[RMDB]
RNA sequence: GGGAACGACUCGAGUAGAGUCGAAAAGAUAUGGAUAAGCGAGUUACAGAGGUCCCUUGAAACUAUCGGUUCGGAAACGAACCGACGAAUUUCAGGGACCGACGAAGUAACUCGCUUAUCCUAAGUCCGAUUACAAGUUGUUCGCAACUUGUAAUCGAAAAGAAACAACAACAACAAC
Reactivity to DMS in 0.01 (KOAc 150mM, MgCl2 10mM, bicine 150mM(pH8.5), 24C), signal-to-noise 2, nucleotides 027 to 126: g010a120u000a300u020g000g000a010u000a010a000g010c000g010a040g000u010u010a010c000a100g010a210g000g020u000c010c000c000u000u000g020a020a010a020c110u000a270u000c000g000g000u000u000c020g010g010a090a070a300c000g000a000a010c020c000g000a010c060g020a040a210u000u000u010c010a050g000g000g030a020c000c000g000a030c300g000a090a100g000u000a010a010c020u000c010g000c000u000u000a000u000c000c000u000a010a060g000u000c020